[RMDB]
RNA sequence: GGGAACGACUCGAGUAGAGUCGAAAAGAUAUGGAACGACCCUGCUUUUGACGAAAUAGUGUCGGAAACGACACGAAUUUCGAUAAGCAGCGUUCCUAAGUCAAAUCAUCAUGUUCGCAUGAUGAAAUCUUUAAGAAAAGUUCGCUUUUCUUAAAGAAAAAGAAACAACAACAACAAC
Reactivity to DMS in 0.01 (KOAc 150mM, MgCl2 10mM, bicine 150mM(pH8.5), 24C), signal-to-noise 7, nucleotides 027 to 126: g010a030u000a260u000g000g000a010a010c000g010a240c280c300c030u000g000c000u000u010u010u000g030a240c110g010a010a000a010u000a220g010u000g010u000c000g010g010a060a050a140c010g000a010c010a010c000g000a070a070u000u000u000c010g010a120u010a030a020g010c000a020g000c010g010u000u000c000c000u000a020a100g000u000c030a120a140a180u010c000a000u000c000a010u000g000u000u020c270g020c000a020u000g000a010u000g010a030a100a090
Reactivity to 2A3 in 0.01 (KOAc 150mM, MgCl2 10mM, bicine 150mM(pH8.5), 24C), signal-to-noise 5, nucleotides 027 to 126: g020a010u060a020u090g000g010a010a010c000g140a130c180c060c000u020g000c030u140u180u220u300g300a260c100g010a000a000a010u030a030g000u000g000u000c000g010g000a040a040a020c010g010a000c000a010c020g010a020a010u010u010u000c010g060a070u030a040a010g000c000a000g020c010g010u000u000c000c000u020a080a000g050u030c030a050a080a190u060c000a000u020c000a000u010g080u090u090c300g010c150a000u020g000a000u010g010a020a000a020
An RNA of 177 nucleotides, treated with DMS and 2A3 and read out base by base. DMS adducts were read by reverse transcription with MarathonRT. The reactions ran in a buffer of 150 mM KOAc, 10 mM MgCl2 and 150 mM bicine (pH 8.5), at 24 C. For DMS, 11,271 sequencing reads were counted. 2A3 adducts were read by reverse transcription with SuperScript II with manganese.